[RMDB]
RNA sequence: GGGAACGACUCGAGUAGAGUCGAAAAGAUAUGGAUGGACAGGGAGGACCAUUCGGAAACGAAUGAAGUCCAUCGAUCUGUACCCAUCCUAAGUCAAAACUUAUACGGACUUCGGUCCGUAUAAGAAGAUCUGGAUAUCGUUCGCGAUAUCCAGAUCAAAAGAAACAACAACAACAAC
Reactivity to DMS in 0.01 (KOAc 150mM, MgCl2 10mM, bicine 150mM(pH8.5), 24C), signal-to-noise 2, nucleotides 027 to 126: g010a000u000a020u000g000g000a010u000g000g000a090c000a020g010g000g010a010g040g020a030c050c010a000u000u000c010g010g010a010a010a080c000g000a000a000u000g000a150a210g000u000c000c000a260u020c150g000a010u020c020u000g020u000a090c300c010c020a010u000c010c000u000a000a080g000u000c000a120a100a190a170c000u000u000a010u000a010c010g000g000a010c010u000u000c300g020g000u020c010c010g020u000a000u000a000a000g010a110a130
Chemical mapping of a 177-nucleotide RNA with DMS. The DMS profile rests on 1,527 reads. It was measured as part of the RMDB library TTRDES. The reactions ran in a buffer of 150 mM KOAc, 10 mM MgCl2 and 150 mM bicine (pH 8.5), at 24 C.